[RMDB]
Structure probing data (2A3) for a 207-nucleotide construct.
2A3 adducts were read by reverse transcription with SuperScript II with manganese.
It was measured as part of the RMDB library M2RFPK.
Conditions: 150 mM KOAc, 10 mM MgCl2 and 150 mM bicine (pH 8.5), 24 C.
RNA sequence: GGGAACGACUCGAGUAGAGUCGAAAAAGUGAGUAUGGCUCGUUACGACGAGCCAUACUCACAACGGUUUUCCUAAAUCGUCGUGAGACGGACCUUGGAAAACCUAGUAUUUAAAUAACGAGGUCAAAUUAGCCUAGAUCCUUCGGGAUCUAGGCAACGAUUCAAGUACGUUCGCGUACUUGAAUCGAAAAGAAACAACAACAACAAC
Reactivity to 2A3 in 0.01 (KOAc 150mM, MgCl2 10mM, bicine 150mM(pH8.5), 24C), signal-to-noise 1, nucleotides 027 to 156: a000g000u000g010a000g010u000a000u000g000g010c010u020c030g010u010u070a060c250g010a020c010g000a110g000c000c000a000u000a000c000u020c000a000c000a000a010c010g000g000u000u000u000u000c000c000u000a000a000a020u060c020g000u000c010g020u030g120a070g010a030c000g020g000a000c000c020u010u000g010g000a000a000a000a000c000c000u010a020g000u000a040u040u280u120a120a210a120u160a090a040c140g020a000g010g020u010c000a000a000a150u170u140a080g000c010c000u000a000g000a010u000c020c020u010u100c270g050g000g000a000u010c000u000a010g000g000c000a000a000